Chemical mapping of a 207-nucleotide RNA with 2A3. High 2A3 reactivity points to a flexible backbone, as in loops and unpaired stretches.
[RMDB]
RNA sequence: GGGAACGACUCGAGUAGAGUCGAAAAGAUGGGCCAUCUGAAGACAUGGUGCAGGGAACACCAUAUUAGUAAUGAUGAGUUUCCUACCUGUACUCAGAAAGAGCUUUUAAGCUAUGGUGUCACCAAGAGUUCAGUUCUAUUGUACAAGAUGAAUGGAGCGUGAAAGGUUGUUCGCAACCUUUCACGCAAAAGAAACAACAACAACAAC
Reactivity to 2A3 in 0.01 (KOAc 150mM, MgCl2 10mM, bicine 150mM(pH8.5), 24C), signal-to-noise 2, nucleotides 027 to 156: g160a160u190g000g040g000c150c010a060u000c000u010g090a070a000g100a060c000a070u110g010g010u090g050c120a020g070g000g000a000a000c010a030c080c030a000u000a060u090u200a100g200u140a180a100u150g050a030u030g040a040g050u010u020u020c010c010u020a030c010c010u000g010u050a100c000u030c020a000g070a020a100a000g060a000g030c040u030u040u040u200a050a000g040c020u030a040u100g000g000u100g000u060c030a010c050c000a060a020g030a010g090u080u080c070a000g000u000u000c000u060a110u070u130g080u060a140c080a090a070g060a090u090g040a050a080u000g050g020a070